[RMDB]
RNA sequence: GGGAACGACUCGAGUAGAGUCGAAAACUGAUGGGCGAGGACGUCGACGCGCGGCGCAGCUUUAUCACCCGCAACGCCAAGGAUGUUCGGUUCCUGGAUGUCUAACGCAACCCUGCGUUCGAUUGCAGCUACAGCUGCGAUUCGUCGCAGCUGUAGCAAAAGAAACAACAACAACAAC
Reactivity to DMS in 0.01 (KOAc 150mM, MgCl2 10mM, bicine 150mM(pH8.5), 24C), signal-to-noise 2, nucleotides 027 to 126: c030u010g080a120u010g010g000g000c060g000a120g000g000a080c050g000u010c000g040a080c140g000c150g010c060g000g030c070g010c100a210g000c020u040u000u020a090u010c080a100c120c010c010g000c090a020a020c050g010c000c000a210a060g000g000a120u010g000u000u010c040g000g000u010u000c140c010u000g010g020a120u000g000u000c000u040a000a090c070g000c010a040a150c210c110c030u000g000c020g000u000u000c000g010a170u000u000g000c070a150
Reactivity to 2A3 in 0.01 (KOAc 150mM, MgCl2 10mM, bicine 150mM(pH8.5), 24C), signal-to-noise 4, nucleotides 027 to 126: c080u090g020a040u080g020g050g030c040g080a110g120g030a070c030g030u030c030g020a070c040g040c000g000c010g000g000c010g000c050a050g030c010u060u090u140a060u070c000a070c020c000c000g010c050a080a050c050g000c020c060a070a070g040g020a060u110g070u130u110c050g060g050u020u020c020c000u000g030g020a070u130g010u050c000u000a020a010c010g000c030a060a150c010c020c060u030g010c000g000u010u010c020g030a060u000u170g080c040a010